[RMDB]
RNA sequence: GGGAACGACUCGAGUAGAGUCGAAAAGAAAGAAAAAGAAAUCAUGAAAUGCGGUCAACCGUCAGAAUUUCGGUCGGAAAUACGACAUUACGCAGAAAGCCGGCCGCAAUGUCGUUUAAGAAGAAAACAUAGUAAUAUAUUUCGAUAUAUUACUAUGAAAAGAAACAACAACAACAAC
Reactivity to 2A3 in 0.01 (KOAc 150mM, MgCl2 10mM, bicine 150mM(pH8.5), 24C), signal-to-noise 6, nucleotides 027 to 126: g040a030a060a000g060a020a100a010a000a000g100a040a100a020u080c030a000u130g040a070a130a050u130g020c020g000g040u080c030a080a100c070c000g070u060c060a010g070a110a050u030u030u050c020g000g010u050c020g030g040a040a090a080u160a040c030g030a030c040a050u080u090a060c070g010c040a030g120a080a060a000g060c020c000g020g000c010c000g000c010a020a060u050g030u070c020g010u000u080u120a080a090g070a050a010g050a010a110a000a000
Reactivity to DMS in 0.01 (KOAc 150mM, MgCl2 10mM, bicine 150mM(pH8.5), 24C), signal-to-noise 5, nucleotides 027 to 126: g000a060a060a070g010a060a060a080a100a080g000a070a040a050u010c080a070u030g000a060a090a060u030g030c030g000g010u010c130a080a100c050c040g000u010c070a060g000a100a090u010u010u000c020g010g020u040c050g010g000a050a050a050u030a080c050g010a050c060a060u020u020a110c150g010c070a080g000a100a060a120g000c070c040g010g000c070c000g040c090a010a020u010g010u000c020g010u000u010u010a050a080g010a080a070g010a050a060a060a130